[RMDB]
RNA sequence: GGGAACGACUCGAGUAGAGUCGAAAACUGCGAUGCCGUAAUGGAGAGCGAUUCGUAUCAGAACCAGACACAGAUACGAAAGAGGUCUUCAAGACCACCCACUGAAUUAUGAGUGGCUACUGAUCGGGAAUUAUUUAUUAUUCGUAAUAAAUAAUUCAAAAGAAACAACAACAACAAC
Reactivity to 2A3 in 0.01 (KOAc 150mM, MgCl2 10mM, bicine 150mM(pH8.5), 24C), signal-to-noise 9, nucleotides 027 to 126: c020u040g020c010g020a030u090g150c080c040g030u090a100a070u090g020g000a010g000a010g080c010g030a030u010u000c000g000u010a000u010c010a040g070a180a120c090c030a060g080a120c050a020c010a140g010a010u010a010c010g020a010a020a010g230a030g020g100u010c000u040u040c020a060a030g040a100c000c010a020c020c010c000a040c060u100g090a190a130u230u110a090u300g040a020g020u010g000g020c010u050a040c020u040g020a060u040c010g010g000
Reactivity to DMS in 0.01 (KOAc 150mM, MgCl2 10mM, bicine 150mM(pH8.5), 24C), signal-to-noise 9, nucleotides 027 to 126: c040u000g020c030g000a040u020g020c050c060g010u010a060a190u000g010g010a010g000a030g010c010g010a300u000u000c000g010u000a010u000c000a090g010a110a140c110c130a080g020a120c180a130c110a130g000a000u010a010c010g000a010a010a040g010a300g000g000u000c000u000u000c030a030a080g000a160c020c020a050c080c010c020a030c160u010g010a120a100u040u030a100u010g010a050g000u000g000g010c070u010a040c050u010g000a080u000c030g000g010